[RMDB]
RNA sequence: GGGAACGACUCGAGUAGAGUCGAAAAACUGCCAUACGUGGCAGAAACACGCCUUACCAGGACGAAACAGCGUGUCUAAAAAACAGUCCUUCAUACCUGAUCUGGAGGGUAGAUCAGGAAUACUAAAAAAAUCGGGUGAAGUUCGCUUCACCCGAAAGUUAUGAAGAGGCUUCGGCCUCUUCAUAACAAAAGAAACAACAACAACAAC
Reactivity to 2A3 in 0.01 (KOAc 150mM, MgCl2 10mM, bicine 150mM(pH8.5), 24C), signal-to-noise 1, nucleotides 027 to 156: a000c020u010g000c020c000a040u020a060c180g140u020g010g000c000a000g010a050a000a010c010a000c010g000c000c020u050u120a100c120c050a010g000g000a020c030g030a020a070a140c070a050g000c000g010u030g000u020c060u010a010a010a010a010a010a010c020a000g030u030c020c000u010u020c030a040u060a140c000c000u000g000a010u010c010u060g030g110a060g100g020g040u080a020g000a000u010c010a000g030g080a000a000u060a040c080u210a040a000a140a000a000a000a100u020c000g000g000g000u010g000a000a010g010u120u130c110g070c060u000u000c030a000c110c000c000g000a000a000a000
Source: RMDB library M2RFOK, as collected in RNAgym. The record gives the reactivity of an RNA of 207 nucleotides to 2A3. For 2A3, 866 sequencing reads were counted. The reactions ran in a buffer of 150 mM KOAc, 10 mM MgCl2 and 150 mM bicine (pH 8.5), at 24 C.